[RMDB]
RNA sequence: GGGAACGACUCGAGUAGAGUCGAAAAUAAAACCGCGAAGAGAACCAAGCCUUGAGACACUAGGAGGGAUGUCUCAAGGCUUGGUUCUCGACUAGUGUCGAGUCGUUCCCAAUCCCUCCGCAAAAAACUAACUGUUUUAGUUCGCUAAAACAGUUAGAAAAGAAACAACAACAACAAC
Reactivity to DMS in 0.01 (KOAc 150mM, MgCl2 10mM, bicine 150mM(pH8.5), 24C), signal-to-noise 1, nucleotides 027 to 126: u000a090a090a100a140c090c120g000c140g000a110a190g010a160g000a000a010c010c000a000a000g000c000c000u000u010g010a010g000a000c000a050c180u010a040g010g000a040g000g000g000a030u010g000u000c000u000c000a020a000g000g000c000u000u000g000g000u000u000c000u000c010g010a020c000u000a060g000u000g030u000c000g020a040g010u010c010g020u010u000c000c000c010a010a000u000c000c000c000u010c010c000g050c160a000a040a050a140a030a050